Overview: Structure probing data (2A3 and DMS) for a 177-nucleotide construct. DMS (dimethyl sulfate) methylates the pairing face of unpaired adenines and cytosines. Reactivities are rounded to 0.1 and cut off at 0 and 3. The RNA was probed in 150 mM KOAc, 10 mM MgCl2 and 150 mM bicine (pH 8.5) at 24 C. DMS adducts were read by reverse transcription with MarathonRT. For 2A3, 1,474 sequencing reads were counted.
RNA sequence: GGGAACGACUCGAGUAGAGUCGAAAAUCGUCAUGCCUGGCUCGCGUCAUGCGCGCGUGCAACCGCCGUCGCGCAUGAGCGCCGAGCCUCGCUGUUCGCCGCUUCGCCGACGGCUCGCCUGCACGCAUGGCAGGCCAUUAUUCGUAAUGGCCUGCCAAAAAGAAACAACAACAACAAC
Reactivity to 2A3 in 0.01 (KOAc 150mM, MgCl2 10mM, bicine 150mM(pH8.5), 24C), signal-to-noise 1, nucleotides 027 to 126: u080c020g050u040c030a040u140g040c000c040u030g010g000c010u000c020g010c000g010u020c000a000u040g000c020g020c020g000c050g090u080g000c040a190a270c120c180g000c000c000g120u220c050g030c000g000c040a060u010g000a010g000c000g050c030c010g000a000g000c000c000u020c010g010c000u000g040u020u060c040g000c000c020g000c030u080u130c080g030c040c010g040a110c020g050g000c000u000c020g010c020c000u060g000c060a040c060g050c060a100
Reactivity to DMS in 0.01 (KOAc 150mM, MgCl2 10mM, bicine 150mM(pH8.5), 24C), signal-to-noise 2, nucleotides 027 to 126: u010c060g020u010c040a090u000g000c010c040u000g000g010c010u000c010g020c010g000u000c010a000u000g000c000g000c030g020c000g030u010g050c020a130a110c280c250g020c010c000g000u010c050g030c020g000c020a020u000g010a050g010c010g030c130c050g010a010g000c000c000u000c120g020c050u000g010u000u000c080g020c040c000g030c000u000u000c070g020c030c020g010a080c080g010g000c010u000c110g000c020c010u000g000c030a050c110g030c070a120